The record gives the reactivity of an RNA of 177 nucleotides to 2A3 and DMS. Values cover nucleotides 27 to 126. For 2A3 the reverse transcriptase was SuperScript II with manganese.
[RMDB]
RNA sequence: GGGAACGACUCGAGUAGAGUCGAAAAGAUAUGGAUUGUGAACUACUCGAUAACUGCUGAUGACCUCGGAAACGAGCAAGGCAGGAAGCGAGCACAAUCCUAAGUCAAAGACACCUUCGGGUGUCAACUCCAUACAUACCUUCGGGUAUGUAUGGAGAAAAGAAACAACAACAACAAC
Reactivity to 2A3 in 0.01 (KOAc 150mM, MgCl2 10mM, bicine 150mM(pH8.5), 24C), signal-to-noise 2, nucleotides 027 to 126: g030a020u060a070u160g000g020a010u020u020g010u010g070a080a090c080u190a040c000u300c020g010a020u020a150a060c010u010g020c000u030g040a270u170g050a180c000c010u000c000g020g010a060a050a050c000g000a000g020c020a060a170g000g000c020a020g000g030a080a100g020c000g000a000g000c020a000c010a000a000u020c000c000u000a100a000g000u000c030a060a060a090g020a010c010a000c020c000u060u110c300g100g000g000u020g000u010c010a000a010
Reactivity to DMS in 0.01 (KOAc 150mM, MgCl2 10mM, bicine 150mM(pH8.5), 24C), signal-to-noise 2, nucleotides 027 to 126: g030a070u000a300u000g000g010a000u010u020g000u000g020a110a050c090u020a300c020u000c010g020a040u000a140a300c020u000g030c000u000g000a150u020g000a100c300c000u000c000g000g000a120a070a220c000g000a020g000c050a070a070g040g010c010a020g000g010a110a120g000c010g000a010g020c000a010c000a020a000u000c000c000u000a010a080g000u010c040a090a140a070g010a010c000a000c020c010u010u020c230g030g000g010u000g010u000c000a030a130